[RMDB]
RNA sequence: GGGAACGACUCGAGUAGAGUCGAAAAGGCCAUGUGUGUCCUGGCUCUGUGUCCUUGGCAUGUUGCCCUCCACUUCCUUGUCUUUGAAAGGGGAUGCUGGUGGUGCCCAUUUCAGAAACUGGUUUGAGACUGGGCAUGGUGGCUCACACCUGUAAUACACUCCCAUGGAGUUCGCUCCAUGGGAGUGAAAAGAAACAACAACAACAAC
Reactivity to 2A3 in 0.01 (KOAc 150mM, MgCl2 10mM, bicine 150mM(pH8.5), 24C), signal-to-noise 1, nucleotides 027 to 156: g040g010c060c030a190u230g090u060g040u000g000u180c000c000u000g050g000c000u030c000u060g250u050g110u130c060c030u020u020g000g070c130a070u040g080u130u300g110c000c030c130u060c020c000a020c000u030u020c000c020u120u150g260u220c200u160u100u250g170a150a040a140g000g000g000g000a020u000g060c100u040g000g000u040g000g180u260g000c000c000c000a070u010u060u060c010a010g120a270a190a100c090u170g040g020u190u300u210g040a000g050a000c000u000g030g000g000c000a000u000g030g060u060g000g000c000u040c060a030c000a030c000c000u000g100u000a000a000u010a100